[RMDB]
RNA sequence: GGGAACGACUCGAGUAGAGUCGAAAAUCAGCAAACAUUCGUGCUUUUCAUGUAACGCGCUGGUAGCCGAUGCCUUCCAUGCAACCAGCGCCGCUCGCUCUUCCGCUGUCGUUAUAUGAGGGCGAACGAUGGGUGCGUGCUUCGGCACGCACCCAUCAAAAGAAACAACAACAACAAC
Reactivity to 2A3 in 0.01 (KOAc 150mM, MgCl2 10mM, bicine 150mM(pH8.5), 24C), signal-to-noise 1, nucleotides 027 to 126: u000c000a020g080c040a080a000a000c040a110u110u130c040g070u010g040c060u100u020u000u090c040a120u090g040u130a020a040c010g000c000g000c000u000g010g010u000a010g020c000c000g140a060u110g110c000c000u070u010c080c000a130u260g000c060a050a070c000c000a000g000c010g000c000c020g080c020u000c010g000c010u000c000u100u000c070c030g100c020u030g110u050c090g010u100u060a130u000a030u160g010a070g010g000g000c000g020a080a020c080